Record summary: Chemical mapping of a 177-nucleotide RNA with 2A3 and DMS. DMS adducts were read by reverse transcription with MarathonRT. The DMS profile rests on 61,946 reads.
RNA sequence: GGGAACGACUCGAGUAGAGUCGAAAAGAGAUACUGGAUAGCAGAAUGAGGUGUCACGGUCUCUGUUAUUUAGUAUCAGAACGACGGGUAGAUUAGAUUGUGAUACCUCAUGUCUAUCGGUCGUAUAGUAACUGUUAGUAUUCGUACUAGCAGUUACAAAAGAAACAACAACAACAAC
Reactivity to 2A3 in 0.01 (KOAc 150mM, MgCl2 10mM, bicine 150mM(pH8.5), 24C), signal-to-noise 9, nucleotides 027 to 126: g090a000g000a000u040a050c020u060g070g010a000u010a000g010c020a010g060a250a060u020g000a010g010g000u040g020u030c030a000c010g020g010u000c020u000c010u010g010u000u000a020u010u070u030a030g010u010a030u040c010a000g080a050a010c040g040a010c020g040g000g030u050a020g010a120u140u030a020g020a020u020u050g010u010g020a010u020a010c000c000u000c010a010u030g030u000c000u000a000u000c010g030g020u010c020g010u050a060u080a070
Reactivity to DMS in 0.01 (KOAc 150mM, MgCl2 10mM, bicine 150mM(pH8.5), 24C), signal-to-noise 9, nucleotides 027 to 126: g000a120g000a080u020a010c010u010g010g010a020u000a010g010c250a140g020a300a030u010g000a010g000g000u000g020u000c040a030c010g000g000u010c010u000c060u000g000u020u000a040u000u010u020a080g020u020a060u030c140a100g010a090a060c120g010a020c030g000g010g010u010a050g010a130u020u030a040g000a020u000u000g010u000g000a030u010a010c010c000u000c010a010u000g010u030c000u000a010u000c000g010g000u010c080g010u010a050u020a090